About this RNA:
The record gives the reactivity of an RNA of 177 nucleotides to 2A3 and DMS. The reactions ran in a buffer of 150 mM KOAc, 10 mM MgCl2 and 150 mM bicine (pH 8.5), at 24 C. For 2A3, 3,840 sequencing reads were counted. High 2A3 reactivity points to a flexible backbone, as in loops and unpaired stretches. For DMS, 4,510 sequencing reads were counted.

[RMDB]
RNA sequence: GGGAACGACUCGAGUAGAGUCGAAAAAGAUGAACUCCCCUCACGACUCGGGGCGCUCAUCCGCAACGAGUACGGCGCAUUCUGUGGGUUCAUUGGGCGAUAGCGGUGGGGCACAAAAAGAUCAUUCUCAUCCCCAUUAUUUCGAUAAUGGGGAUGAAAAAGAAACAACAACAACAAC
Reactivity to 2A3 in 0.01 (KOAc 150mM, MgCl2 10mM, bicine 150mM(pH8.5), 24C), signal-to-noise 3, nucleotides 027 to 126: a010g020a020u020g010a040a020c010u100c020c000c010c010u020c010a090c020g020a020c000u000c010g000g000g000g000c000g000c000u040c050a090u040c020c010g010c000a010a030c020g000a010g020u110a190c010g040g000c060g030c070a110u180u040c040u150g020u090g020g000g000u030u030c010a010u050u080g020g000g000c070g100a120u100a100g020c030g050g090u190g000g010g020g000c060a040c070a080a110a030a020a010g150a080u150c020a040u200u190c020
Reactivity to DMS in 0.01 (KOAc 150mM, MgCl2 10mM, bicine 150mM(pH8.5), 24C), signal-to-noise 4, nucleotides 027 to 126: a140g000a040u000g000a030a050c030u000c010c040c040c050u000c040a080c040g000a080c030u010c000g000g010g010g010c030g000c060u010c300a050u010c260c010g010c020a010a040c040g010a030g000u000a070c030g000g000c140g000c290a070u000u000c120u000g020u000g010g010g000u000u010c080a060u010u000g000g000g010c090g010a100u000a090g020c070g010g000u000g010g010g000g010c050a070c120a040a030a060a060a050g000a070u000c080a120u010u000c060